[RMDB]
RNA sequence: GGGAACGACUCGAGUAGAGUCGAAAAUUAAAUGAUGUAGUACGGCCGCCACUGAAGGACGGGUCCUCUCCGAAAGGAGAGUUGAGUAGAGUGUGAGCAGGACCGGGUGCUAGUCACUGGUCAAAAACUGAAGAUUUAGUUUCGACUAAAUCUUCAGAAAAGAAACAACAACAACAAC
Reactivity to 2A3 in 0.01 (KOAc 150mM, MgCl2 10mM, bicine 150mM(pH8.5), 24C), signal-to-noise 2, nucleotides 027 to 126: u120u080a010a040a100u110g050a010u070g030u150a050g010u020a040c040g020g010c000c010g010c010c000a060c040u060g030a060a040g050g040a040c030g050g000g020u030c000c000u000c000u010c000c000g050a070a000a010g000g010a010g000a010g000u010u030g020a020g000u080a010g010a040g050u110g010u030g030a070g020c020a070g050g020a020c010c040g040g010g040u030g010c030u030a030g040u090c030a000c080u040g010g060u080c030a020a030a000a030a070
Reactivity to DMS in 0.01 (KOAc 150mM, MgCl2 10mM, bicine 150mM(pH8.5), 24C), signal-to-noise 5, nucleotides 027 to 126: u000u010a070a080a090u000g000a060u000g000u000a050g010u000a060c050g010g000c010c030g000c030c030a060c080u000g000a120a100g010g000a050c050g000g010g010u000c090c000u010c000u000c000c000g010a090a080a180g010g010a020g000a000g000u000u000g000a120g010u000a050g010a080g010u000g010u000g000a080g010c060a090g010g000a070c040c020g000g000g010u000g020c020u000a060g010u000c010a030c050u010g000g010u010c040a030a050a040a070a120